[RMDB]
RNA sequence: GGGAACGACUCGAGUAGAGUCGAAAAUAGCAUCACUUCUACAUUAGGCACAGGCUAUAUGUCCCUGAGCGCAAAAGAUUACACCCCUAUAUUGGCAUGGAUUAUGUCCCGGUUGCUGACGCAUAUCCCCAGGAUGCAAGUUCGCUUGCAUCCUGGGAAAAGAAACAACAACAACAAC
Reactivity to 2A3 in 0.01 (KOAc 150mM, MgCl2 10mM, bicine 150mM(pH8.5), 24C), signal-to-noise 2, nucleotides 027 to 126: u100a000g040c020a010u070c000a000c050u030u030c040u140a110c020a130u070u160a050g020g020c000a110c100a090g080g000c000u030a010u030a070u160g140u070c020c000c000u000g090a050g030c020g000c030a040a050a040a040g100a000u000u110a000c020a050c030c020c000c000u040a060u010a050u240u120g010g000c030a060u050g040g030a060u050u070a010u180g100u040c050c000c000g080g000u070u020g020c000u060g010a080c050g020c070a020u150a110u290c020

Chemical mapping of a 177-nucleotide RNA with 2A3. Values are in units of 0.01, from 0 to 300, in steps of 10. Values cover nucleotides 27 to 126. The RNA was probed in 150 mM KOAc, 10 mM MgCl2 and 150 mM bicine (pH 8.5) at 24 C.